[RMDB]
RNA sequence: GGGAACGACUCGAGUAGAGUCGAAAAUGGUGUUAAGUGGAAUAAGUGGAAAAAUAUACAUAUAUGUACAGGGGGCUACAUAUAUGUAUAUGCCCCCUCGGCCAAGUAUAAGUAGGUAUAAGGUGGACAUGAUAGCACGGUUCGCCGUGCUAUCAUGAAAAGAAACAACAACAACAAC
Reactivity to 2A3 in 0.01 (KOAc 150mM, MgCl2 10mM, bicine 150mM(pH8.5), 24C), signal-to-noise 2, nucleotides 027 to 126: u110g000g000u040g040u080u060a120a170g070u060g010g050a050a090u120a260a070g050u180g060g040a040a080a000a080a000u030a000u000a000c010a000u000a010u020a000u030g010u020a010c050a060g000g000g010g000g050c020u000a000c000a000u010a000u000a010u060g000u000a000u000a010u030g000c000c000c020c040c000u000c010g040g020c000c020a080a000g030u020a050u020a110a090g140u080a050g120g000u060a100u010a090a050g040g010u040g000g010a000
Reactivity to DMS in 0.01 (KOAc 150mM, MgCl2 10mM, bicine 150mM(pH8.5), 24C), signal-to-noise 2, nucleotides 027 to 126: u010g000g020u010g010u010u010a070a150g030u000g020g000a120a070u030a070a080g000u010g000g000a020a050a100a120a010u000a020u000a000c000a020u000a000u000a030u000g000u010a010c160a120g030g030g010g010g000c180u000a020c020a010u000a010u010a020u020g010u000a020u010a000u000g020c030c000c000c000c010u000c030g000g000c000c060a030a130g000u010a060u040a020a080g010u030a030g000g000u000a040u050a050a060g020g000u000g000g010a220
The record gives the reactivity of an RNA of 177 nucleotides to 2A3 and DMS. DMS (dimethyl sulfate) methylates the pairing face of unpaired adenines and cytosines. Values cover nucleotides 27 to 126. DMS adducts were read by reverse transcription with MarathonRT. Source: RMDB library OK1LIB, as collected in RNAgym. Conditions: 150 mM KOAc, 10 mM MgCl2 and 150 mM bicine (pH 8.5), 24 C. For 2A3, 948 sequencing reads were counted.